[RMDB]
RNA sequence: GGGAACGACUCGAGUAGAGUCGAAAAGAUAUGGAUGACUAAGGCCGAUAAGAUGGUAUCGGAAACGAUACGCAUCUUUUGACGGCUAUGUCAUCCUAAGUCAAAGAAUCACGUUCGCGUGAUUCAACACCUAAAAGUUCUUCGGAACUUUUAGGUGAAAAGAAACAACAACAACAAC
Reactivity to 2A3 in 0.01 (KOAc 150mM, MgCl2 10mM, bicine 150mM(pH8.5), 24C), signal-to-noise 4, nucleotides 027 to 126: g000a000u020a020u080g000g000a000u010g010a000c020u110a190a300g170g020c010c040g150a190u100a300a010g000a000u010g010g000u000a000u010c010g010g000a040a000a000c020g010a000u010a010c070g040c210a010u010c000u040u000u020u070g180a100c010g000g000c000u000a010u030g000u000c000a000u000c000c000u010a020a000g020u000c010a090a100a230g010a020a000u010c010a000c010g050u100u100c300g040c000g140u010g000a010u020u000c000a010a010
Reactivity to DMS in 0.01 (KOAc 150mM, MgCl2 10mM, bicine 150mM(pH8.5), 24C), signal-to-noise 4, nucleotides 027 to 126: g010a030u000a170u000g000g000a010u000g020a010c010u010a170a240g020g030c000c000g030a120u020a020a010g010a010u000g010g000u000a000u000c000g000g000a050a030a070c000g020a020u000a010c000g020c010a000u000c000u000u000u000u000g010a190c100g010g020c000u000a150u010g000u010c000a010u000c000c000u000a000a080g010u000c020a140a130a140g010a020a010u000c000a010c000g030u010u010c210g010c010g040u000g000a010u000u000c000a180a300